RNA sequence: GGGAACGACUCGAGUAGAGUCGAAAAGAUAUGGAUCCUCAUAGUAGCUAUGAAGUCGGAAACGAUGGAGCUAUAUGGGAUCCUAAGUCAAAAGACAUGCGUGGUCCUUCGGGACCACGCAUGUCAAUCCUAAUGCUACGUUCGCGUAGCAUUAGGAAAAAGAAACAACAACAACAAC
Reactivity to 2A3 in 0.01 (KOAc 150mM, MgCl2 10mM, bicine 150mM(pH8.5), 24C), signal-to-noise 1, nucleotides 027 to 126: g050a000u060a020u110g010g000a000u020c020c040u240c050a000u050a080g300u050a000g000c000u040a200u300g020a090a010g030u010c000g050g070a070a070a020c000g000a020u020g000g050a040g020c000u010a000u010a000u040g000g010g020a000u030c010c000u000a060a010g100u000c030a000a000a000a240g030a010c000a000u000g000c070g000u000g050g060u010c000c000u100u120c300g000g000g010a000c000c120a010c060g000c010a000u010g020u000c000a030a000
Reactivity to DMS in 0.01 (KOAc 150mM, MgCl2 10mM, bicine 150mM(pH8.5), 24C), signal-to-noise 2, nucleotides 027 to 126: g000a040u000a300u000g010g000a010u000c000c010u030c020a020u000a020g030u000a000g030c000u000a220u000g000a120a200g000u000c000g000g000a170a060a110c000g000a010u000g000g000a000g030c000u000a000u000a020u000g000g000g000a000u000c000c000u000a020a090g000u010c040a050a060a110a110g000a020c000a010u000g020c020g030u000g010g000u000c000c000u010u000c220g000g020g010a010c020c000a000c010g010c000a020u000g000u000c000a040a050

An RNA of 177 nucleotides, treated with 2A3 and DMS and read out base by base. The data come from the RNA Mapping Database (RMDB), library TTRDEL. For DMS the reverse transcriptase was MarathonRT. Values cover nucleotides 27 to 126.